[RMDB]
RNA sequence: GGGAACGACUCGAGUAGAGUCGAAAACACCCGAAGAAAGGAAGGGUGAAAACCCUGUUUCGGCGGGAAUUACUCCUGUCGGCCGCUGGGCACUCCCCACCGUCCUUUUUUGCCAGUUCGCUCCAGGUUUCCCCGGGGAUCCCUGAAGCGCUCCUCCCUCUCACAUAUUCUUCGGAAUAUGUGAGAGAAAAGAAACAACAACAACAAC
Reactivity to 2A3 in 0.01 (KOAc 150mM, MgCl2 10mM, bicine 150mM(pH8.5), 24C), signal-to-noise 1, nucleotides 027 to 156: c050a060c010c000c010g020a030a010g020a020a020a000g000g050a000a050g040g010g020u020g000a040a040a000a020c010c000c010u030g000u020u080u030c000g010g000c000g000g060g050a040a100u300u170a090c090u020c030c010u060g010u000c030g010g010c100c080g020c060u040g010g010g000c030a010c080u100c000c050c000c000a010c030c020g150u050c000c000u030u030u010u000u150u130g170c020c030a060g060u090u220c030g030c030u000c010c020a020g000g000u010u020u010c000c040c000c080g090g000g090g070a010u010c020c000c000u030g010a010a000g000c000g020c020u000c000c000u070c010c000